RNA sequence: GGGAACGACUCGAGUAGAGUCGAAAAGAUUUUACGCUGUCACUCACCCGCGUGGAUGAAUCACUGGCCGCGCUUUAUGGCGAUAUCGGUAAACAGGCGGAGUCGCUCAUCGGUAAGGCUGGCAGUAUGGCGACCAGAUUCACGGGAAUGACGGGGGCGAUGUAUUUACCUUCGGGUAAAUACAUCGAAAAGAAACAACAACAACAAC
Reactivity to 2A3 in 0.01 (KOAc 150mM, MgCl2 10mM, bicine 150mM(pH8.5), 24C), signal-to-noise 4, nucleotides 027 to 156: g010a010u100u080u050u030a060c080g010c080u060g030u070c010a040c070u040c030a090c010c010c000g070c040g060u060g050g050a090u060g050a080a070u090c050a050c090u030g050g000c000c000g030c000g030c020u030u140u050a160u200g020g000c020g020a010u040a080u130c050g020g030u100a170a170a060c040a040g080g000c060g060g060a040g060u030c010g000c050u100c070a070u070c050g060g010u100a070a020g060g000c020u030g040g000c010a030g040u120a090u120g060g000c010g010a030c010c020a010g020a100u040u020c010a000c020g000g000g060a080a070u070g020a010c050g000g010g000g000g030
Reactivity to DMS in 0.01 (KOAc 150mM, MgCl2 10mM, bicine 150mM(pH8.5), 24C), signal-to-noise 1, nucleotides 027 to 156: g000a070u010u010u000u010a060c060g010c020u000g000u000c040a080c060u000c000a070c060c020c060g030c110g000u000g000g000a050u000g010a140a120u000c090a150c090u000g040g070c000c000g060c060g040c060u020u020u000a060u020g040g060c010g030a120u000a090u010c020g020g040u000a010a050a090c110a150g050g030c030g000g000a090g000u000c020g080c040u000c060a050u000c020g020g010u010a060a080g000g010c050u010g020g000c220a090g050u000a050u000g010g020c030g010a050c010c000a110g020a110u000u020c050a020c030g000g000g020a060a080u000g020a060c000g050g000g010g050g000
Description:
Conditions: 150 mM KOAc, 10 mM MgCl2 and 150 mM bicine (pH 8.5), 24 C. An RNA of 207 nucleotides, treated with 2A3 and DMS and read out base by base. It was measured as part of the RMDB library OK3TST. For 2A3, 2,656 sequencing reads were counted. For 2A3 the reverse transcriptase was SuperScript II with manganese.